Chemical mapping of a 177-nucleotide RNA with 2A3 and DMS.
The DMS profile rests on 14,010 reads.
The data come from the RNA Mapping Database (RMDB), library OK1LIB.
For 2A3 the reverse transcriptase was SuperScript II with manganese.
DMS adducts were read by reverse transcription with MarathonRT.
RNA sequence: GGGAACGACUCGAGUAGAGUCGAAAAGACAAGAAUAAGAGGGACAAGAAUCUGACCUGCAACUCCUCGUGGUGUCUCUCGGAAACGUGCUCAACGCGCGCCCGACGCAGGCAGAAAGUAAGAAGAAACGCUAUUAAUAUUUCGAUAUUAAUAGCGUAAAAGAAACAACAACAACAAC
Reactivity to 2A3 in 0.01 (KOAc 150mM, MgCl2 10mM, bicine 150mM(pH8.5), 24C), signal-to-noise 7, nucleotides 027 to 126: g060a040c080a070a030g120a150a070u170a120a020g020a020g030g020g030a020c040a030a040g110a100a150u040c000u030g110a300c010c000u000g000c010a020a070c030u050c030c020u150c090g050u150g070g020u050g010u010c030u000c000u000c040g000g000a060a100a010c010g000u020g010c010u080c160a120a110c110g000c000g000c000g020c000c000c000g020a030c090g000c000a000g000g000c000a000g000a020a010a000g120u180a030a070g040a030a030g060a050a140
Reactivity to DMS in 0.01 (KOAc 150mM, MgCl2 10mM, bicine 150mM(pH8.5), 24C), signal-to-noise 7, nucleotides 027 to 126: g010a140c160a100a080g010a090a090u020a100a070g020a040g000g010g010a050c050a090a110g020a080a120u020c000u000g010a100c030c010u010g010c030a170a090c090u000c020c030u020c120g030u020g010g000u020g000u010c010u010c040u010c020g000g000a030a100a170c050g010u000g030c010u020c240a070a100c240g010c030g010c000g000c130c000c020g010a060c130g020c010a020g000g000c000a020g000a080a070a120g020u040a040a090g010a080a080g000a100a130